[RMDB]
Structure probing data (2A3 and DMS) for a 177-nucleotide construct. The reactions ran in a buffer of 150 mM KOAc, 10 mM MgCl2 and 150 mM bicine (pH 8.5), at 24 C. 2A3 adducts were read by reverse transcription with SuperScript II with manganese. The DMS profile rests on 1,355 reads.

RNA sequence: GGGAACGACUCGAGUAGAGUCGAAAAGAAAAGGAGGCCCGGUUACCUAUAUAGAGAUAAGGAAACCGGCGCGCGCGCGCUGGCUGGCCUCCGCAUUGAAUAGUGUAGGUACACGCGCGCGAAAAAACUAAUUAGUAUACUUCGGUAUACUAAUUAGAAAAGAAACAACAACAACAAC
Reactivity to 2A3 in 0.01 (KOAc 150mM, MgCl2 10mM, bicine 150mM(pH8.5), 24C), signal-to-noise 1, nucleotides 027 to 126: g000a000a070a020a030g040g070a040g050g010c010c000c020g000g030u010u010a070c000c010u070a060u010a000u110a300g120a030g020a210u180a260a110g020g000a030a000a000c000c000g020g000c020g010c000g000c010g000c000g010c000g000c040u100g130g040c060u050g080g000c040c000u010c000c050g000c000a040u070u210g110a090a110u120a280g030u000g020u030a040g070g040u100a040c020a000c010g000c000g040c000g000c000g000a090a000a000a000a030a000
Reactivity to DMS in 0.01 (KOAc 150mM, MgCl2 10mM, bicine 150mM(pH8.5), 24C), signal-to-noise 2, nucleotides 027 to 126: g010a060a060a060a080g010g000a050g000g010c040c010c010g020g030u010u000a060c000c000u000a060u000a300u000a140g020a090g010a300u000a020a050g000g010a150a040a020c000c010g020g010c120g010c020g000c050g000c020g010c020g000c200u000g010g030c060u000g010g000c000c000u000c030c020g010c040a060u000u000g000a080a140u010a070g010u010g000u000a050g020g010u010a050c010a050c020g020c010g020c000g020c000g000a000a020a050a060a090a100